The record gives the reactivity of an RNA of 177 nucleotides to 2A3 and DMS. The RNA was probed in 150 mM KOAc, 10 mM MgCl2 and 150 mM bicine (pH 8.5) at 24 C. Values cover nucleotides 27 to 126.
RNA sequence: GGGAACGACUCGAGUAGAGUCGAAAAUAUACAGAGGCAGCCGCCUGGCAUUUCGUCAUGCUGGCGACCCGUGGGCUUGCGGUUAUGCCUAUGAGCAGGCCAUGACUGUCUCGGCCGGUGGCUUUACUGUUUACAUCCUAUUCGUAGGAUGUAAACAAAAAGAAACAACAACAACAAC
Reactivity to 2A3 in 0.01 (KOAc 150mM, MgCl2 10mM, bicine 150mM(pH8.5), 24C), signal-to-noise 4, nucleotides 027 to 126: u160a010u030a030c050a040g050a020g020g010c030a000g020c020c010g020c030c020u040g030g000c020a020u050u130u200c100g080u090c030a010u040g030c040u030g020g010c020g010a040c000c010c010g000u060g020g020g020c010u030u060g000c020g050g010u120u080a120u270g050c000c020u070a130u150g070a050g020c030a010g030g000c010c000a020u030g020a030c030u030g000u070c010u000c040g030g000c030c020g110g030u060g010g010c000u080u080u070a080c030
Reactivity to DMS in 0.01 (KOAc 150mM, MgCl2 10mM, bicine 150mM(pH8.5), 24C), signal-to-noise 6, nucleotides 027 to 126: u000a110u000a110c110a080g010a050g020g010c070a040g010c060c020g000c020c000u010g020g000c010a060u000u000u000c230g000u000c170a030u000g010c030u000g010g010c010g010a080c060c030c030g020u000g000g010g010c020u020u000g010c020g020g010u000u000a070u000g010c030c030u010a070u010g000a150g010c040a070g000g000c040c060a070u000g000a060c010u000g000u000c020u000c060g000g010c100c100g010g030u000g010g010c020u000u000u000a080c170